Structure probing data (2A3) for a 177-nucleotide construct. Conditions: 150 mM KOAc, 10 mM MgCl2 and 150 mM bicine (pH 8.5), 24 C. The 2A3 profile rests on 755 reads.
RNA sequence: GGGAACGACUCGAGUAGAGUCGAAAACUAUCUCUUCGACUGCUUCUGUUAUCGCAUUUCGUGCGAGGAUAAAGGUCGUUCGGAGUGAAAGCGUUCACUAUCCACACUUUGCCCGCACAUUGAUGCGAGCUAACCGCGAUUUCGAUCGCGGUUAGCUAAAAGAAACAACAACAACAAC
Reactivity to 2A3 in 0.01 (KOAc 150mM, MgCl2 10mM, bicine 150mM(pH8.5), 24C), signal-to-noise 2, nucleotides 027 to 126: c070u060a130u050c050u010c000u160u020c100g030a040c020u020g000c000u170u040c060u070g030u050u210a050u030c030g010c000a000u000u240u000c140g050u000g000c050g100a270g010g000a080u030a130a010a010g040g020u050c110g020u080u070c090g020g010a010g000u030g000a080a040a030g260c150g240u000u030c030a010c000u070a100u040c000c000a000c000a010c030u030u040u000g030c060c000c000g000c000a000c000a050u000u100g050a030u000g000c000g010